Structure probing data (2A3 and DMS) for a 177-nucleotide construct.
[RMDB]
RNA sequence: GGGAACGACUCGAGUAGAGUCGAAAAGAUGAGGAGGAGAAAGCAUUAGGUAGCUUUGACACAUAAUAAUGAUGUCUGUAGCAUCAUUUGUCUGCCUCCGCAUUCCAUGGCAUGACGCAACCGUGCGCACCAUCCAAUGUUUCGACAUUGGAUGGUGAAAAGAAACAACAACAACAAC
Reactivity to 2A3 in 0.01 (KOAc 150mM, MgCl2 10mM, bicine 150mM(pH8.5), 24C), signal-to-noise 5, nucleotides 027 to 126: g040a000u030g020a030g010g000a010g020g030a080g130a100a050a020g030c040a050u060u160a130g040g170u120a050g040c010u070u050u070g030a010c010a000c020a050u190a150a040u160a060a020u220g030a040u020g050u050c110u190g220u240a030g000c000a010u000c010a010u010u000u060g020u020c020u040g020c010c000u000c000c010g000c000a010u020u000c030c010a050u070g080g000c040a050u070g010a050c070g020c160a030a040c070c030g030u020g020c030g000
Reactivity to DMS in 0.01 (KOAc 150mM, MgCl2 10mM, bicine 150mM(pH8.5), 24C), signal-to-noise 6, nucleotides 027 to 126: g000a010u000g010a070g010g000a030g010g010a120g010a080a070a040g000c010a120u010u010a140g030g010u010a110g020c000u010u000u010g020a100c070a090c270a110u010a090a060u010a010a020u000g010a030u000g010u000c060u010g010u010a160g010c010a020u000c000a080u000u000u000g010u000c050u010g000c010c000u000c000c010g000c010a010u000u010c010c010a100u000g020g000c040a040u000g000a130c110g020c160a080a090c170c030g020u000g010c040g020
The data come from the RNA Mapping Database (RMDB), library OK2TRN.